[RMDB]
RNA sequence: GGGAACGACUCGAGUAGAGUCGAAAAGCGGUGAAGCAGAGGUCUGAGGCUGAGAAGUCUCAGCAGAGGUCAUCGUCGAAUUAAAACUGGUUUAAGUAUACCUCUGAACUUAGACUAGAAGAUGAUAGUUAGAGUUUGUAUUCGUACAAGCUCUAACAAAAGAAACAACAACAACAAC
Reactivity to DMS in 0.01 (KOAc 150mM, MgCl2 10mM, bicine 150mM(pH8.5), 24C), signal-to-noise 7, nucleotides 027 to 126: g010c000g010g010u000g000a010a030g020c010a010g020a020g000g000u000c000u000g000a010g010g000c000u010g010a230g000a190a010g020u000c000u000c000a000g000c210a120g000a120g000g000u000c000a010u000c000g000u010c060g010a120a080u030u030a040a070a020a110c010u000g020g010u000u000u010a010a010g000u010a070u000a020c010c000u000c000u000g000a250a030c000u000u000a000g000a010c000u000a010g000a060a100g010a140u040g000a120u030a110
Reactivity to 2A3 in 0.01 (KOAc 150mM, MgCl2 10mM, bicine 150mM(pH8.5), 24C), signal-to-noise 1, nucleotides 027 to 126: g020c010g000g010u020g010a030a010g050c010a010g000a000g000g000u010c000u010g010a010g010g010c000u000g000a010g020a050a000g010u000c000u000c000a000g000c000a010g010a020g010g040u000c000a010u000c000g070u040c040g070a030a050u100u080a070a030a010a040c000u000g000g000u000u000u000a000a000g000u000a000u000a020c000c000u000c000u000g000a000a000c000u000u000a000g000a000c000u010a000g000a020a020g100a070u250g030a050u080a100